[RMDB]
RNA sequence: GGGAACGACUCGAGUAGAGUCGAAAACAUUAGCUUCGGCAUCCCACCCUACGGCUUCGAAAAGCUGAGAUGAGCUCAGCAAGGGAACUCAAGAGACUCAACUCAGUGAACUCAGAGAGAGAAUAAACUUUCCUUCUCAGUUCGCUGAGAAGGAAAGAAAAGAAACAACAACAACAAC
Reactivity to 2A3 in 0.01 (KOAc 150mM, MgCl2 10mM, bicine 150mM(pH8.5), 24C), signal-to-noise 1, nucleotides 027 to 126: c010a030u200u160a020g000c000u050u080c100g060g010c010a080u030c050c020c000a010c020c000c000u090a080c060g030g000c000u040u100c030g020a050a090a040a000g000c000u010g020a010g010a020u050g040a000g000c010u010c000a050g040c030a050a000g030g060g000a070a040c010u000c030a000a000g040a030g060a300c000u000c060a010a080c000u000c010a030g010u020g020a070a000c010u030c080a000g020a010g000a000g000a000g020a170a030u210a110a130a040
Reactivity to DMS in 0.01 (KOAc 150mM, MgCl2 10mM, bicine 150mM(pH8.5), 24C), signal-to-noise 1, nucleotides 027 to 126: c090a100u010u000a090g000c000u010u020c070g010g000c060a170u000c040c060c030a200c030c090c040u020a200c060g020g000c000u010u000c080g000a090a040a100a190g010c000u000g010a030g000a220u000g010a080g000c010u000c010a060g040c300a140a020g000g020g020a040a060c020u020c010a170a140g000a020g020a040c010u000c010a040a030c000u000c000a000g010u000g010a040a060c040u000c100a110g000a030g000a070g000a060g000a120a070u060a060a140a230